[RMDB]
RNA sequence: GGGAACGACUCGAGUAGAGUCGAAAAAGUAUCGGGUUCGCCCGAUACUAGAGCACCACUCCUGCGGGAGUUAAGGCCUAACGCACAGGCGGGUGCAAAGCCAACUCAAGGGUUUCGACCCUUGAAAUCUGAUCACCGAUUUCGAUCGGUGAUCAGAAAAAGAAACAACAACAACAAC
Reactivity to DMS in 0.01 (KOAc 150mM, MgCl2 10mM, bicine 150mM(pH8.5), 24C), signal-to-noise 1, nucleotides 027 to 126: a040g000u000a030u000c000g000g000g000u030u000c210g050c000c020c000g000a000u000a000c000u000a040g000a210g000c000a010c000c000a010c000u000c000c010u000g050c130g050g040g000a040g010u000u000a000a060g050g070c120c000u000a110a010c180g080c180a110c060a190g020g040c170g020g000g050u030g020c000a120a080a180g020c030c040a140a140c170u000c000a020a000g040g000g010u000u000u010c250g000a000c000c000c010u000u000g000a000a090a120
Background: This 177-nucleotide RNA was probed chemically with DMS.